[RMDB]
RNA sequence: GGGAACGACUCGAGUAGAGUCGAAAAGAUCCGCCACCGAGCGGAUCCGCUGAGAGAUCGUGCGGCAUUACACGAUUGGAUCCACUUGGAUCCUAGGUACGCGUCGAGCCUGUGGCGGUGGCCAACCGAGUUCAAUCGGAUUCGUCCGAUUGAACUCAAAAGAAACAACAACAACAAC
Reactivity to DMS in 0.01 (KOAc 150mM, MgCl2 10mM, bicine 150mM(pH8.5), 24C), signal-to-noise 2, nucleotides 027 to 126: g000a040u000c010c010g000c010c010a060c150c210g010a160g020c030g000g010a020u010c030c060g000c080u020g010a180g020a120g010a060u000c000g010u000g020c090g000g020c160a160u010u020a160c010a050c030g020a070u010u000g040g000a020u000c000c020a300c300u000u000g030g000a040u000c000c000u000a040g010g000u000a090c130g030c050g000u000c040g010a200g000c040c050u000g020u000g010g010c010g000g010u000g000g000c030c090a060a120c130c100
Reactivity to 2A3 in 0.01 (KOAc 150mM, MgCl2 10mM, bicine 150mM(pH8.5), 24C), signal-to-noise 2, nucleotides 027 to 126: g030a010u000c010c000g000c000c030a160c050c070g010a060g000c000g010g030a020u030c010c030g090c070u110g030a100g000a000g010a060u010c020g010u050g080c030g090g000c080a090u090u190a040c130a000c010g070a050u050u060g000g000a000u020c010c010a140c250u110u260g000g000a000u030c010c000u010a010g020g010u050a010c030g030c010g060u080c050g010a020g020c040c030u070g030u060g050g000c000g030g000u040g010g080c030c010a040a030c060c100
An RNA of 177 nucleotides, treated with DMS and 2A3 and read out base by base. For 2A3, 2,270 sequencing reads were counted. The RNA was probed in 150 mM KOAc, 10 mM MgCl2 and 150 mM bicine (pH 8.5) at 24 C. For DMS the reverse transcriptase was MarathonRT. The data come from the RNA Mapping Database (RMDB), library OK2TST.